RNA sequence: GGGAACGACUCGAGUAGAGUCGAAAAGAAAGAAAGAAAGAGACGGCAGCUGCGGCCUAGCCCCCAGGCUUCACUUGGCGUGGACAACUUGCUAAGUAAAGUGGGGGGUGGGCCACGGCUGGCUCAAAGGGAACAGCUUAUUCGUAAGCUGUUCCCUAAAAGAAACAACAACAACAAC
Reactivity to DMS in 0.01 (KOAc 150mM, MgCl2 10mM, bicine 150mM(pH8.5), 24C), signal-to-noise 1, nucleotides 027 to 126: g020a060a080a080g000a100a100a120g000a050a070a110g030a220g010a120c240g020g010c030a010g000c000u000g020c050g000g000c000c000u040a030g000c000c000c000c000c020a040g000g000c000u000u000c040a000c040u000u000g000g000c010g000u000g000g000a180c300a040a180c010u030u050g020c000u010a000a000g000u000a010a000a010g020u010g020g010g010g000g010g030u000g000g000g000c000c000a000c020g010g000c030u000g000g050c000u010c040a070a100
Reactivity to 2A3 in 0.01 (KOAc 150mM, MgCl2 10mM, bicine 150mM(pH8.5), 24C), signal-to-noise 4, nucleotides 027 to 126: g090a020a060a010g100a040a130a010g100a040a080a000g070a000g020a030c160g060g030c010a000g010c010u010g000c020g000g010c000c000u040a130g050c000c000c000c000c000a020g130g010c000u030u010c010a000c000u000u000g000g000c060g030u100g020g090a090c040a180a060c130u170u270g000c000u000a000a000g010u000a030a030a000g020u050g020g000g000g000g000g020u020g010g000g000c000c010a000c000g000g000c010u000g000g000c000u000c010a070a110